Chemical mapping of a 177-nucleotide RNA with 2A3 and DMS. For DMS the reverse transcriptase was MarathonRT. Reactivities are given for positions 27 through 126. The reactions ran in a buffer of 150 mM KOAc, 10 mM MgCl2 and 150 mM bicine (pH 8.5), at 24 C. In probing experiments dimethyl sulfate is read out at A N1 and C N3, which are open when not base-paired. The data come from the RNA Mapping Database (RMDB), library OK1LIB.
RNA sequence: GGGAACGACUCGAGUAGAGUCGAAAAAUCAUUCCAAUCUUGAAUGAGCGAAGCAAAACCAUAAAAUUAGGCAAAUGGUGGGUGGUUAUAGUAAAAUAUAUUUUGCCGUUGAUCAUAACGAUUGUAACCAUAUGCGACCUUUCGAGGUCGCAUAUGGAAAAGAAACAACAACAACAAC
Reactivity to 2A3 in 0.01 (KOAc 150mM, MgCl2 10mM, bicine 150mM(pH8.5), 24C), signal-to-noise 2, nucleotides 027 to 126: a000u060c000a020u070u030c030c000a120a100u220c120u130u240g140a020a010u090g000a050g060c000g000a070a000g120c050a040a000a100a150c120c070a000u080a180a200a050a000u090u080a050g010g000c020a020a020a020u010g060g000u140g020g000g050u080g000g140u090u100a080u090a040g170u200a020a000a020a020u300a060u030a040u060u020u000u100g000c000c010g040u020u150g040a020u000c020a060u060a170a090c050g040a070u000u040g040u140a030a110
Reactivity to DMS in 0.01 (KOAc 150mM, MgCl2 10mM, bicine 150mM(pH8.5), 24C), signal-to-noise 1, nucleotides 027 to 126: a080u020c020a030u000u000c030c070a030a090u050c050u000u000g050a120a010u010g000a010g000c040g000a170a130g020c090a040a070a010a050c020c010a040u020a030a010a050a070u070u000a030g000g000c050a020a010a040u030g050g010u000g010g000g010u010g000g000u010u030a030u000a030g030u010a020a040a080a100u050a050u000a010u000u000u010u000g010c000c000g000u000u020g000a090u010c030a140u000a010a200c240g070a050u030u000g050u010a080a040